[RMDB]
RNA sequence: GGGAACGACUCGAGUAGAGUCGAAAAGAUAUGGACCAAUGUACAUGAUAAGUUCGAGGGAGAAUAAGUGUCGGAAACGACAUGAUGUUCGACGAUCUCGACUUAUCAUGUACAUUGGUCCUAAGUCCUUAUGUCACUUGUUCGCAAGUGACAUAAGAAAAGAAACAACAACAACAAC
Reactivity to DMS in 0.01 (KOAc 150mM, MgCl2 10mM, bicine 150mM(pH8.5), 24C), signal-to-noise 4, nucleotides 027 to 126: g010a100u010a300u010g000g000a010c000c000a020a000u000g010u000a010c000a010u000g010a020u000a000a000g010u010u010c010g010a030g000g000g000a030g010a020a010u000a130a300g020u000g000u000c000g010g000a100a100a290c000g000a000c000a000u000g010a120u020g010u000u000c010g000a070c300g000a020u020c000u000c000g010a010c000u000u000a000u000c000a000u000g000u010a000c000a000u000u000g000g000u000c000c000u000a000a060g000u000c030
An RNA of 177 nucleotides, treated with DMS and read out base by base. Conditions: 150 mM KOAc, 10 mM MgCl2 and 150 mM bicine (pH 8.5), 24 C.